[RMDB]
RNA sequence: GGGAACGACUCGAGUAGAGUCGAAAAGAUAUGGACGCAUAUACAGGACAACAGCUCGGAAACGAGACAUGUCCGUAUGAUGCGUCCUAAGUCAAAAUCAAGUCUAUACUUCGGUAUAGACUUGAAAGUCUCCGUAUAUCUUCGGAUAUACGGAGACAAAAGAAACAACAACAACAAC
Reactivity to 2A3 in 0.01 (KOAc 150mM, MgCl2 10mM, bicine 150mM(pH8.5), 24C), signal-to-noise 1, nucleotides 027 to 126: g030a010u060a020u130g000g000a010c010g000c050a000u030a000u020a000c190a210g020g000a000c000a090a020c070a120g020c000u000c000g020g020a080a060a020c000g010a010g020a030c010a030u080g010u000c020c010g020u000a000u060g100a000u010g000c000g000u000c000c000u040a010a000g010u000c000a010a010a000a140u050c010a010a000g010u020c000u000a000u000a030c000u040u090c200g050g030u010a000u000a000g000a010c000u000u010g000a000a000a000
Reactivity to DMS in 0.01 (KOAc 150mM, MgCl2 10mM, bicine 150mM(pH8.5), 24C), signal-to-noise 2, nucleotides 027 to 126: g000a030u000a300u010g000g000a020c000g020c010a020u000a030u000a020c020a170g020g000a040c000a030a100c200a220g000c020u000c000g000g010a130a080a240c000g000a010g010a050c110a110u010g020u000c010c000g010u000a020u000g020a000u000g000c000g000u000c020c000u000a000a080g030u020c040a100a050a090a160u000c000a000a000g020u000c000u000a000u000a010c000u010u010c240g050g030u000a000u000a000g010a000c000u000u000g000a000a120a090